Chemical mapping of a 177-nucleotide RNA with 2A3 and DMS. Conditions: 150 mM KOAc, 10 mM MgCl2 and 150 mM bicine (pH 8.5), 24 C. DMS adducts were read by reverse transcription with MarathonRT. Source: RMDB library M2PK50, as collected in RNAgym.
[RMDB]
RNA sequence: GGGAACGACUCGAGUAGAGUCGAAAACCCAAAGCGUUCGCGCUUUGGGAAAGAAUAAACGAGCGAAAAGAAUGAUGAGGACGCUCGUAAAAACCACAUCAAAAAGUCAACGGUUCGCCGUUGACAACCCCUAAUUAAAGUUCGCUUUAAUUAGGGGAAAAGAAACAACAACAACAAC
Reactivity to 2A3 in 0.01 (KOAc 150mM, MgCl2 10mM, bicine 150mM(pH8.5), 24C), signal-to-noise 6, nucleotides 027 to 126: c000c000c000a010a000a000g020c010g030u040u120c190g000c000g000c110u000u000u000g010g010g010a080a090a020g050a030a050u160a150a150a010c010g010a000g020c040g080a070a050a050a100g150a090a220u240g080a080u150g040a120g090g040a020c020g000c010u010c010g000u020a050a020a000a000a020c040c030a050c010a090u160c070a040a100a050a030a020g000u010c000a000a000c000g000g030u020u050c180g030c070c000g000u000u000g000a000c000a000a000
Reactivity to DMS in 0.01 (KOAc 150mM, MgCl2 10mM, bicine 150mM(pH8.5), 24C), signal-to-noise 3, nucleotides 027 to 126: c010c000c000a020a020a010g000c000g040u000u010c200g050c010g020c000u000u000u010g010g010g010a010a020a080g000a150a070u000a060a120a060c020g000a010g020c000g010a080a070a110a100g000a100a100u020g020a090u010g010a170g010g020a230c030g000c030u000c000g010u000a020a040a070a080a050c030c010a050c200a040u000c090a100a050a070a120a100g000u000c000a000a000c000g000g010u000u000c210g020c000c020g020u000u000g000a000c000a040a040